This 177-nucleotide RNA was probed chemically with DMS and 2A3. Values cover nucleotides 27 to 126. The RNA was probed in 150 mM KOAc, 10 mM MgCl2 and 150 mM bicine (pH 8.5) at 24 C.
RNA sequence: GGGAACGACUCGAGUAGAGUCGAAAAACUGGCUGCAGAGGACGAAGCAGGAAGCAUGCCGUGGAUCCCACAUGCACUGGGGCAGGGCAGCCAGGUUCCAGAGCAGCAGGCAUGUGCAUUAUGGGUGCGUAAUGGGUUUAUUCGUAAACCCAUUACGAAAAGAAACAACAACAACAAC
Reactivity to DMS in 0.01 (KOAc 150mM, MgCl2 10mM, bicine 150mM(pH8.5), 24C), signal-to-noise 6, nucleotides 027 to 126: a080c050u000g000g000c010u000g000c020a140g010a120g000g010a100c090g010a080a130g000c060a060g010g020a100a210g000c030a030u000g000c020c000g010u020g020g000a130u020c020c010c030a100c100a070u020g020c000a100c010u010g000g020g010g010c030a090g010g000g000c020a010g000c000c000a030g010g000u000u000c020c010a060g000a090g010c060a070g000c090a120g010g000c020a040u000g010u010g020c090a090u010u020a080u020g000g000g010u010g010
Reactivity to 2A3 in 0.01 (KOAc 150mM, MgCl2 10mM, bicine 150mM(pH8.5), 24C), signal-to-noise 8, nucleotides 027 to 126: a000c020u010g020g000c000u000g000c010a020g070a130g270g080a080c060g060a100a020g060c050a050g060g060a050a000g020c030a030u030g020c010c000g100u070g060g020a110u080c000c030c000a000c000a020u050g000c010a010c080u010g000g000g030g000c040a050g060g080g000c010a000g000c000c000a000g000g010u020u010c010c000a010g020a010g020c050a010g030c020a020g020g020c020a020u030g020u040g010c020a010u080u110a080u220g080g020g000u070g030